[RMDB]
Chemical mapping of a 207-nucleotide RNA with 2A3 and DMS.
For 2A3, 779 sequencing reads were counted.
DMS adducts were read by reverse transcription with MarathonRT.
The DMS profile rests on 1,568 reads.

RNA sequence: GGGAACGACUCGAGUAGAGUCGAAAACAUUAACUGGGCAUUACAACUGAGCCGCGACAAGGUUACCAGCUUAUUCAUGAACCCCCCGCAAAAAUCCAAAGAUGCAGGGUUUGAAGCACUGACAGCACAGAACCCGAUCGCCGACUGGAUCAGCACCCACACUUAGAUUAUUCGUAAUCUAAGUGUGAAAAGAAACAACAACAACAAC
Reactivity to 2A3 in 0.01 (KOAc 150mM, MgCl2 10mM, bicine 150mM(pH8.5), 24C), signal-to-noise 2, nucleotides 027 to 156: c030a030u140u170a030a030c000u050g000g020g020c040a050u060u250a040c020a150a030c040u080g020a010g050c000c060g020c090g070a130c080a100a090g040g030u090u080a040c000c000a000g000c010u030u130a080u170u040c050a070u150g140a100a100c020c000c000c000c040c000g000c030a110a160a040a000a000u030c040c020a020a040a090g040a000u040g140c000a040g000g000g000u000u020u040g010a030a000g000c040a000c060u130g060a020c090a040g000c030a050c010a110g010a020a000c000c010c000g030a010u020c020g030c060c010g040a080c080u030g000g010a010u020c000a000g040c000a020c010c010
Reactivity to DMS in 0.01 (KOAc 150mM, MgCl2 10mM, bicine 150mM(pH8.5), 24C), signal-to-noise 1, nucleotides 027 to 156: c030a150u010u010a000a100c070u050g000g020g160c070a090u000u010a070c040a110a090c050u020g010a060g000c060c080g060c080g000a190c060a080a170g050g000u000u000a060c070c000a070g020c050u010u000a070u010u000c140a090u030g020a120a190c020c060c000c010c000c020g000c010a000a130a090a100a020u000c030c020a040a090a110g000a080u000g010c010a300g000g000g030u000u000u000g010a220a240g020c010a200c080u000g020a130c100a080g000c030a130c050a280g000a010a050c000c000c050g000a040u000c010g010c000c030g010a200c080u000g020g010a030u000c010a230g030c000a070c010c020